[RMDB]
RNA sequence: GGGAACGACUCGAGUAGAGUCGAAAACAGGCUGAACUGCCUAUCUUUCUACAAAACAGUGCUUGCUUUGUUAGCUUGAGAAACUUCAGCAUUCAGAUGGAUUUCUAUCAGUUACAGGAUGCUUUUCUUUCUGUUAGGUAUAUGUGACCAUUUAAAACCUAUGGCUCCCAUUCGUGGGAGCCAUAGGAAAAGAAACAACAACAACAAC
Reactivity to 2A3 in 0.01 (KOAc 150mM, MgCl2 10mM, bicine 150mM(pH8.5), 24C), signal-to-noise 1, nucleotides 027 to 156: c000a000g050g000c000u000g040a070a020c030u050g050c040c000u010a090u040c010u040u090u070c000u100a100c030a020a070a060a030c010a030g040u010g130c020u070u020g020c000u000u130u250g070u100u140a000g040c040u040u080g010a020g030a040a000a100c050u050u060c060a060g000c010a050u040u090c050a010g000a070u030g060g020a050u120u180u060c030u020a050u060c020a020g070u030u060a090c020a010g040g000a020u030g130c000u000u100u100u000c010u000u080u030c010u020g100u100u050a080g030g020u080a040u050a040u200g110u140g100a040c050c000a010u190u220u300a040a280a010a000